[RMDB]
RNA sequence: GGGAACGACUCGAGUAGAGUCGAAAACACAGUGACGGCCUUGAUGCAGUUACCCCGGCAAGCGGUCACGUAUUAGAUCAGGAUAGCCGUUACGCAAAACUGGUUUAUGUGGCUAUCCGUUCCUUGCGCCGCGCCGUGUCGUUACUGCUUAGUAAUCCGUUAUACAUUUCUUCGGAAAUGUAUAACGAAAAGAAACAACAACAACAAC
Reactivity to DMS in 0.01 (KOAc 150mM, MgCl2 10mM, bicine 150mM(pH8.5), 24C), signal-to-noise 5, nucleotides 027 to 156: c070a090c050a080g020u000g020a050c020g010g020c020c060u010u000g000a120u000g030c020a070g020u000u000a100c020c020c040c020g010g020c050a110a120g030c030g020g010u010c060a070c050g020u000a060u000u000a050g010a050u000c040a130g040g010a060u000a060g010c000c020g010u010u000a110c110g000c050a070a060a140a190c100u000g010g030u000u000u000a070u020g030u000g030g000c010u000a030u000c020c010g010u000u000c020c030u010u000g020c040g010c000c020g000c110g000c030c020g010u000g020u000c020g020u000u000a050c020u000g010c010u000u000a110g010u000a130a210u010c020
Reactivity to 2A3 in 0.01 (KOAc 150mM, MgCl2 10mM, bicine 150mM(pH8.5), 24C), signal-to-noise 9, nucleotides 027 to 156: c110a010c020a020g070u070g080a050c040g070g020c020c030u120u140g070a100u150g050c010a020g010u040u080a070c020c000c000c000g010g000c070a180a100g000c010g020g020u080c070a020c140g010u030a120u090u220a040g020a020u030c110a090g000g010a000u010a000g000c010c020g060u110u140a070c100g020c060a050a120a080a140c120u180g080g080u080u130u080a100u180g110u110g010g000c000u000a000u000c000c000g000u010u020c000c000u020u040g010c040g000c010c000g010c000g010c000c000g040u070g030u060c040g010u000u020a000c000u010g020c010u050u070a030g030u090a080a070u060c040
This 207-nucleotide RNA was probed chemically with DMS and 2A3. The RNA was probed in 150 mM KOAc, 10 mM MgCl2 and 150 mM bicine (pH 8.5) at 24 C. 2A3 adducts were read by reverse transcription with SuperScript II with manganese. Values cover nucleotides 27 to 156.